[RMDB]
RNA sequence: GGGAACGACUCGAGUAGAGUCGAAAAAGGUGGACAAGAAGUGGGAGCAGUUCAAGAAGGAGAUGGAAGGAGUCCCGCCGGAAAUCCUCUACGACCAGGAGCUGUGGGAAGAUUGGAUGAUGGACCAAUGAUGCAUACGUUUCGACGUAUGCAUCAUAAAAGAAACAACAACAACAAC
Reactivity to DMS in 0.01 (KOAc 150mM, MgCl2 10mM, bicine 150mM(pH8.5), 24C), signal-to-noise 4, nucleotides 027 to 126: a040g040g020u000g000g020a110c120a070a110g000a080a050g010u000g010g000g020a130g010c050a060g000u000u000c100a080a090g010a070a070g000g010a070g010a110u000g000g000a190a100g000g000a110g010u000c020c020c050g020c050c070g000g000a140a090a100u000c020c020u010c060u010a080c090g000a130c100c060a050g000g010a070g010c070u000g000u010g020g000g000a090a040g000a090u010u000g000g000a070u000g000a100u010g000g010a110c060c070a050
Reactivity to 2A3 in 0.01 (KOAc 150mM, MgCl2 10mM, bicine 150mM(pH8.5), 24C), signal-to-noise 1, nucleotides 027 to 126: a000g080g000u050g020g020a040c050a030a020g070a130a020g020u070g030g020g000a020g000c050a000g030u080u000c060a050a030g050a020a020g060g030a060g010a010u080g040g030a050a000g000g000a040g030u050c020c010c020g040c010c020g020g000a110a130a020u070c000c000u000c010u060a100c090g030a030c000c080a040g030g060a000g060c010u040g070u070g090g000g000a040a030g070a110u050u100g090g000a020u020g010a020u070g040g010a030c010c030a020